[RMDB]
RNA sequence: GGGAACGACUCGAGUAGAGUCGAAAAGGCCGCGGCGCGCGAAACAGCGUCGUCGUGCAUAAGCACGUCGACCAAGCGCCGCGCGUAGGCGUUGAUAAAGCGGCAGUUGUUUUUGCGCACGAGGUCCACGCCUUUCAUGAGCAUCUUGCCGCCGCCGCUAUUCUUGUCAGUUCGCUGACAAGAAUAGAAAAGAAACAACAACAACAAC
Reactivity to DMS in 0.01 (KOAc 150mM, MgCl2 10mM, bicine 150mM(pH8.5), 24C), signal-to-noise 1, nucleotides 027 to 156: g010g000c010c010g070c020g000g010c000g010c020g000c060g010a120a100a080c100a110g030c110g000u000c000g000u000c020g020u060g000c020a160u000a120a240g000c000a020c020g010u010c000g050a020c010c070a210a090g010c030g040c180c010g000c000g000c010g080u000a050g020g020c000g010u000u000g000a220u010a040a090a140g020c010g030g040c000a080g010u000u020g010u010u000u000u030u000g080c010g000c050a050c040g000a080g030g040u000c030c160a120c270g010c020c010u000u010u000c050a090u000g010a000g000c010a060u000c070u010u000g020c000c040g000c000c020g010c010c040g000
Reactivity to 2A3 in 0.01 (KOAc 150mM, MgCl2 10mM, bicine 150mM(pH8.5), 24C), signal-to-noise 2, nucleotides 027 to 156: g070g010c070c000g000c000g030g000c000g020c010g020c080g080a120a050a010c100a060g010c070g100u000c000g000u000c000g030u000g000c000a110u120a300a080g000c010a000c010g000u000c000g000a000c030c030a110a040g020c000g010c000c000g000c000g000c030g000u030a030g000g040c010g020u030u160g070a160u150a110a130a000g000c000g030g010c000a010g000u010u030g050u010u040u000u040u060g030c180g000c070a050c150g050a020g050g020u060c160c000a100c180g050c000c000u060u030u080c070a090u060g010a000g010c000a000u040c010u100u090g010c000c000g000c030c010g000c010c010g000
Source information:
Structure probing data (DMS and 2A3) for a 207-nucleotide construct. For DMS, 2,605 sequencing reads were counted. The 2A3 profile rests on 1,196 reads. The data come from the RNA Mapping Database (RMDB), library OK3TST. For DMS the reverse transcriptase was MarathonRT.